[RMDB]
RNA sequence: GGGAACGACUCGAGUAGAGUCGAAAAGAUAUGGAUAGGUCCUCUUCCGAUAAGCUUGAGUCGGAAACGACUCGAAGCUUUUGACGGAAUGACCUAUCCUAAGUCAAACCCACGGUUCGCCGUGGGAUCUCCAUAACGUCUUCGGACGUUAUGGAGAAAAAGAAACAACAACAACAAC
Reactivity to DMS in 0.01 (KOAc 150mM, MgCl2 10mM, bicine 150mM(pH8.5), 24C), signal-to-noise 2, nucleotides 027 to 126: g010a060u000a300u000g000g000a020u000a010g000g000u000c000c060u000c030u000u000c000c000g020a110u010a010a010g020c000u010u000g000a020g000u000c020g050g020a080a090a180c020g000a030c010u000c000g000a000a020g000c000u000u000u000u000g010a270c260g000g000a150a000u030g000a060c000c000u000a000u000c000c000u010a010a040g010u010c010a140a160a250c010c010c010a010c000g000g000u000u010c280g020c000c000g080u000g010g020g000a010
Reactivity to 2A3 in 0.01 (KOAc 150mM, MgCl2 10mM, bicine 150mM(pH8.5), 24C), signal-to-noise 1, nucleotides 027 to 126: g000a020u070a060u100g000g000a020u000a030g000g030u040c010c010u010c000u020u060c030c020g110a110u040a080a020g000c020u000u060g020a000g000u040c010g000g010a150a080a050c000g030a010c000u010c070g070a030a000g000c000u040u060u020u100g130a120c060g000g110a030a090u250g010a000c000c000u010a000u000c000c000u000a000a010g000u000c010a050a050a170c000c000c000a000c000g020g080u100u130c300g020c120c040g000u050g030g000g000a040
The record gives the reactivity of an RNA of 177 nucleotides to DMS and 2A3. For DMS the reverse transcriptase was MarathonRT. Conditions: 150 mM KOAc, 10 mM MgCl2 and 150 mM bicine (pH 8.5), 24 C. High 2A3 reactivity points to a flexible backbone, as in loops and unpaired stretches. Source: RMDB library TTRDES, as collected in RNAgym. Reactivities are rounded to 0.1 and cut off at 0 and 3.